[RMDB]
Chemical mapping of a 207-nucleotide RNA with 2A3.

RNA sequence: GGGAACGACUCGAGUAGAGUCGAAAAAGCUGUGCAGAGGUGCUCCCGCUGUCCUUACCCUGUGGUCCAGUGUCCACUUACUGUCUCCUCAGCCAGGUGGUCCAGCAGAUGGCCUGCCUCCCUGAGGCCUAGGGAUGUGUCUUUUGCCUCCUGUUCACCAUAAUCGGGUGUUCGCACCCGAUUAUGGAAAAGAAACAACAACAACAAC
Reactivity to 2A3 in 0.01 (KOAc 150mM, MgCl2 10mM, bicine 150mM(pH8.5), 24C), signal-to-noise 1, nucleotides 027 to 156: a010g120c150u110g040u090g100c020a010g040a080g070g060u040g070c040u030c030c040c040g050c110u060g010u070c000c020u060u060a100c000c000c050u030g020u090g060g020u090c000c070a060g010u030g030u150c070c040a070c070u030u230a100c030u030g030u070c010u030c110c000u010c000a010g080c000c020a010g060g000u030g030g030u000c020c000a010g020c030a080g110a300u100g040g020c000c000u000g000c050c000u030c030c000c020u000g030a080g010g000c010c000u070a040g000g000g000a060u090g070u010g020u000c000u010u060u110u070g020c000c010u010c030c010u040g000u010u110c090a040
The 2A3 profile rests on 648 reads. The RNA was probed in 150 mM KOAc, 10 mM MgCl2 and 150 mM bicine (pH 8.5) at 24 C. For 2A3 the reverse transcriptase was SuperScript II with manganese.